[RMDB]
RNA sequence: GGGAACGACUCGAGUAGAGUCGAAAAGCCUUACGAUUCGUCGUAAGGCAUACAAAGUUUUGGCACUAUGAGCCCGCAGCGUUGGUGCUGCCACGCGGUGCAAUACGACGGAUUUCGAUCCGUCGAAAACAUGCAUGCAGUUCGCUGCAUGCAUGUUAAAAGAAACAACAACAACAAC
Reactivity to DMS in 0.01 (KOAc 150mM, MgCl2 10mM, bicine 150mM(pH8.5), 24C), signal-to-noise 5, nucleotides 027 to 126: g000c000c000u000u000a000c000g010a020u000u010c190g030u000c000g010u000a010a010g000g010c000a020u000a040c130a080a110a130g010u000u000u000u010g010g010c000a030c030u000a090u000g010a130g000c020c080c300g020c040a040g010c010g010u010u010g020g030u010g000c050u000g010c000c130a020c120g010c050g000g000u000g010c020a070a090u000a160c030g000a010c000g000g000a020u000u000u010c170g000a020u010c000c000g010u000c000g000a020a050
Reactivity to 2A3 in 0.01 (KOAc 150mM, MgCl2 10mM, bicine 150mM(pH8.5), 24C), signal-to-noise 4, nucleotides 027 to 126: g000c000c000u000u010a010c000g010a010u020u070c190g050u000c000g010u120a000a010g000g010c000a000u030a010c030a000a100a020g010u030u050u120u190g120g010c020a010c020u070a060u290g080a040g010c000c040c040g000c020a010g000c010g050u180u260g120g060u300g060c050u040g000c000c010a030c050g060c020g000g030u030g020c010a030a040u100a080c010g010a000c000g010g000a010u060u040u100c130g090a030u000c010c000g000u000c010g000a000a000